[RMDB]
RNA sequence: GGGAACGACUCGAGUAGAGUCGAAAACACAGAAUCUUCGGAUUCUGUGAAAGCAACAAAAACAUGCAAAAGUUCCAAAAAGCAUGAAGGACAAAAGUCCAAAAACACAUCGCUUCGGCGAUGUGAAGAGAAUUAACUGGUUCGCCAGUUAAUUCUCAAAAGAAACAACAACAACAAC
Reactivity to DMS in 0.01 (KOAc 150mM, MgCl2 10mM, bicine 150mM(pH8.5), 24C), signal-to-noise 2, nucleotides 027 to 126: c010a010c000a000g020a020a000u010c020u000u020c130g020g020a000u010u010c000u000g000u010g000a050a060a110g020c160a080a040c060a050a070a080a100a070c000a010u000g000c010a090a070a110a100g000u000u000c010c010a030a050a120a200a130g000c010a000u010g000a170a130g000g000a010c000a060a060a130a090g010u000c000c010a040a040a060a070a170c000a010c000a010u000c000g010c000u000u010c170g020g000c000g010a020u000g020u000g000a060a090
Reactivity to 2A3 in 0.01 (KOAc 150mM, MgCl2 10mM, bicine 150mM(pH8.5), 24C), signal-to-noise 2, nucleotides 027 to 126: c010a000c000a000g000a000a000u000c000u050u080c150g110g000a010u000u010c000u010g000u000g000a000a000a000g040c010a000a070c050a030a170a050a010a010c010a000u010g000c000a050a020a010a150g020u080u060c020c020a040a100a040a000a020g020c000a000u030g040a150a170g010g000a010c030a070a300a040a070g000u000c010c030a010a030a000a020a030c010a010c010a010u010c000g010c010u040u060c230g120g000c000g000a000u000g000u010g000a010a010
This 177-nucleotide RNA was probed chemically with DMS and 2A3. The 2A3 profile rests on 3,933 reads. For DMS, 1,396 sequencing reads were counted. DMS adducts were read by reverse transcription with MarathonRT. It was measured as part of the RMDB library M2PK50.